[RMDB]
RNA sequence: GGGAACGACUCGAGUAGAGUCGAAAAACGUAUUACGAUAUGAUUCAGAUGGUGUCUUACUGGUUCGUACCAAGGGACAUAAUGGUUUCUUGUUUCCAACCAAAGAACAAGUGGCGAGCCUGAAUAAAAAACUGACUGCCGUUCGCGGCAGUCAGAACAUAUACACGGUGUUCGCACCGUGUAUAUGAAAAGAAACAACAACAACAAC
Reactivity to 2A3 in 0.01 (KOAc 150mM, MgCl2 10mM, bicine 150mM(pH8.5), 24C), signal-to-noise 6, nucleotides 027 to 156: a000c060g040u120a080u120u150a050c070g040a070u050a060u230g110a110u080u120c090a060g060a140u120g050g070u030g040u050c020u060u070a120c050u030g030g000u020u070c070g030u090a050c010c020a020a020g020g000g010a000c020a020u170a080a150u100g070g020u000u000u000c000u010u010g010u010u030u010c030c030a050a070c010c000a070a090a000g020a020a030c030a060a030g020u020g090g010c030g020a010g030c000c010u020g040a040a030u130a070a090a010a000a000a020c000u000g000a000c000u000g000c010c000g000u050u050c220g010c000g080g000c000a000g000u000c000a000g000a000a000
Reactivity to DMS in 0.01 (KOAc 150mM, MgCl2 10mM, bicine 150mM(pH8.5), 24C), signal-to-noise 2, nucleotides 027 to 156: a100c030g000u010a070u000u000a060c030g020a130u010a120u000g010a130u000u000c010a030g020a130u000g010g030u000g010u000c040u000u000a110c090u010g020g010u000u000c100g040u000a100c070c000a040a070g020g020g030a030c030a040u000a080a130u010g030g030u000u000u000c020u000u000g020u000u000u000c010c020a070a160c080c030a060a060a130g000a050a070c060a090a120g000u000g010g000c030g040a120g000c030c010u000g010a050a090u040a010a090a040a090a080a120c000u000g000a030c000u000g000c020c010g040u000u000c290g020c010g020g010c000a010g010u000c010a000g000a030a080